[RMDB]
RNA sequence: GGGAACGACUCGAGUAGAGUCGAAAACAGCAGGACUGGGAGAUAAUUAGGGAGGUGUUUAUGAGGAACAAGAGUUGAAGAAAAGUCCCUAAAUGUCUAGCAAAUGUGGAUUCACAGGAAGGGCUCUGGUGGAGCUUGGGCCAGACCUCUCCCCAGACCCACUAAUUAGUUUCGACUAAUUAGUGGGAAAAGAAACAACAACAACAAC
Reactivity to DMS in 0.01 (KOAc 150mM, MgCl2 10mM, bicine 150mM(pH8.5), 24C), signal-to-noise 2, nucleotides 027 to 156: c030a140g040c050a050g000g020a250c030u000g000g000g010a080g020a070u000a050a130u000u000a070g000g000g020a090g010g030u000g040u000u020u010a040u020g040a180g000g030a070a120c050a040a070g000a160g000u000u010g030a080a110g010a100a060a050a120g010u000c010c000c030u000a030a090a120u000g030u010c020u000a060g030c080a040a070a080u000g000u000g010g020a170u000u000c060a080c100a040g010g030a100a080g000g000g020c080u000c040u000g000g010u010g010g030a050g010c070u000u010g000g020g010c000c050a080g000a090c020c040u000c030u000c000c000c000c040a060g010a150
The data come from the RNA Mapping Database (RMDB), library OK3TST. Chemical mapping of a 207-nucleotide RNA with DMS. The reactions ran in a buffer of 150 mM KOAc, 10 mM MgCl2 and 150 mM bicine (pH 8.5), at 24 C. Values cover nucleotides 27 to 156.